[RMDB]
Annotation
An RNA of 207 nucleotides, treated with 2A3 and DMS and read out base by base. Reactivities are given for positions 27 through 156. The reactions ran in a buffer of 150 mM KOAc, 10 mM MgCl2 and 150 mM bicine (pH 8.5), at 24 C.
RNA sequence: GGGAACGACUCGAGUAGAGUCGAAAACUUAAUAGUCAAUUAACAAUUGACGAUGAUAGUGAUAGCGAGAGUGAAGUUGAUAUUAGCGGUAUGCAAGUUAUGGUUAAUGACAACAAUGUAAAUAUCGCAGAUUUGGUGCGUAAAGCCGGCAUUAGCACUAUUAGAGUGGCUUCGGCCACUCUAAUAGAAAAGAAACAACAACAACAAC
Reactivity to 2A3 in 0.01 (KOAc 150mM, MgCl2 10mM, bicine 150mM(pH8.5), 24C), signal-to-noise 2, nucleotides 027 to 156: c000u030u060a050a010u030a150g000u000c010a000a010u040u060a160a040c040a050a050u010u020g000a020c030g040a050u060g010a030u060a020g050u040g070a070u030a060g040c080g010a020g000a000g040u030g010a100a010g000u030u050g050a030u070a070u160u160a020g000c020g010g000u050a030u040g040c030a020a080g020u090u070a060u100g050g010u070u160a110a030u150g060a020c020a070a010c010a070a120u070g030u050a040a110a050u100a020u060c030g000c010a010g010a100u060u070u150g020g030u030g000c010g010u030a000a110a000g040c030c020g020g000c020a000u040u050a020g020c030a000
Reactivity to DMS in 0.01 (KOAc 150mM, MgCl2 10mM, bicine 150mM(pH8.5), 24C), signal-to-noise 2, nucleotides 027 to 156: c060u000u010a140a090u000a070g010u000c000a000a030u000u010a110a190c200a150a270u000u010g000a020c040g000a070u010g030a150u000a040g040u000g030a060u010a090g000c060g010a140g000a120g020u000g010a070a130g030u000u000g010a080u000a050u000u010a160g040c010g050g000u010a030u000g000c090a090a160g020u010u010a050u020g010g020u010u030a080a080u000g020a070c050a060a060c010a070a070u010g000u010a060a040a060u010a060u000c060g060c040a210g000a090u000u000u010g010g040u000g040c030g000u000a040a070a120g030c030c040g000g000c040a040u000u000a100g010c070a140